[RMDB]
RNA sequence: GGGAACGACUCGAGUAGAGUCGAAAAUCGAUCGUCAGCACAAAUACACGGGGCUCAAACUCGGCGGAGUCUACGGUUUUUAUCCCCGAUUCACCGGACCGCAGCGAUCCACGGUCAAGGCCGCGGAGCUGGUCGCUUAGUUCGCUAAGCGACCAGCAAAAGAAACAACAACAACAAC
Reactivity to 2A3 in 0.01 (KOAc 150mM, MgCl2 10mM, bicine 150mM(pH8.5), 24C), signal-to-noise 1, nucleotides 027 to 126: u080c020g020a030u010c030g030u030c020a010g020c040a020c050a100a100a040u220a070c060a000c000g030g000g050g000c010u070c130a060a080a110c080u020c120g070g020c060g100g060a060g020u000c070u020a070c060g000g030u070u000u020u000u140a090u060c000c000c020c000g080a100u120u120c060a100c040c020g050g000a020c010c010g070c010a070g060c000g050a010u000c000c000a000c000g000g000u060c090a040a070g060g000c000c000g000c020g030g030a040
Chemical mapping of a 177-nucleotide RNA with 2A3. The reactions ran in a buffer of 150 mM KOAc, 10 mM MgCl2 and 150 mM bicine (pH 8.5), at 24 C. For 2A3, 824 sequencing reads were counted. Reactivities are given for positions 27 through 126.